[RMDB]
RNA sequence: GGGAACGACUCGAGUAGAGUCGAAAACAGGACGUUAGCAUAGGUCCACUUUACUAUGCAGAUUGCAUCGUCGGAGACGACGUAGAGACCGCUACAGCAGGGUCGAUGACCUGCUGAAUUACACCUCUUGUCAUAGCGAGGGAUCAAGCUAUGUACACAUCGCUACUCGUUUCGACGAGUAGCGAUGAAAAGAAACAACAACAACAAC
Reactivity to 2A3 in 0.01 (KOAc 150mM, MgCl2 10mM, bicine 150mM(pH8.5), 24C), signal-to-noise 1, nucleotides 027 to 156: c030a000g000g140a000c030g000u060u000a000g020c000a050u020a080g040g050u000c000c050a090c030u050u040u060a030c080u000a000u000g000c020a010g140a300u140u170g050c000a010u010c020g000u000c020g180g000a030g040a100c030g030a030c020g000u000a000g000a010g000a000c000c120g110c020u130a020c000a000g050c000a000g000g030g130u130c110g130a140u150g080a050c000c000u000g050c040u000g020a000a000u110u030a040c040a030c000c000u000c010u090u060g000u060c000a000u000a000g000c000g090a080g010g090g000a040u120c140a110a000g000c000u000a000u000g020u040a000c010a000